[RMDB]
RNA sequence: GGGAACGACUCGAGUAGAGUCGAAAACCAGUGAUGCGGCCGACGAAGAUGGCGUUCGUGCUGGCGCUCGCUUGCGUCGGCUUCCUCGCUUCGGACUUCGCUUGCGCGCAGCGCCCGGAACAUGGCGUGCAGCAACUUGUUUCGACAAGUUGCUGCAAAAAGAAACAACAACAACAAC
Reactivity to DMS in 0.01 (KOAc 150mM, MgCl2 10mM, bicine 150mM(pH8.5), 24C), signal-to-noise 1, nucleotides 027 to 126: c010c000a020g000u010g000a030u020g000c150g000g020c020c010g000a020c000g020a020a070g000a070u010g000g000c000g000u070u040c030g000u010g000c070u000g010g020c010g000c010u000c080g030c010u000u000g020c120g020u010c010g030g000c000u000u000c020c050u000c070g000c000u000u000c110g020g010a080c080u000u020c010g070c060u000u000g010c090g010c050g000c020a150g000c100g000c040c010c050g000g000a010a060c110a070u000g000g000c090g030
Reactivity to 2A3 in 0.01 (KOAc 150mM, MgCl2 10mM, bicine 150mM(pH8.5), 24C), signal-to-noise 2, nucleotides 027 to 126: c000c000a000g000u050g030a060u090g010c020g020g000c000c010g010a020c020g000a010a020g050a090u080g000g050c030g020u050u150c030g020u070g050c120u120g030g000c000g000c000u050c040g020c000u010u050g110c020g000u020c010g000g010c000u010u010c000c020u000c000g010c000u030u040c020g060g010a050c030u030u000c090g010c040u080u120g040c070g000c020g000c020a050g010c000g010c000c000c000g000g060a050a090c080a070u100g010g000c010g000

Structure probing data (DMS and 2A3) for a 177-nucleotide construct.
2A3 adducts were read by reverse transcription with SuperScript II with manganese.
The 2A3 profile rests on 1,691 reads.
For DMS the reverse transcriptase was MarathonRT.
Source: RMDB library RFM100, as collected in RNAgym.
The reactions ran in a buffer of 150 mM KOAc, 10 mM MgCl2 and 150 mM bicine (pH 8.5), at 24 C.
Values cover nucleotides 27 to 126.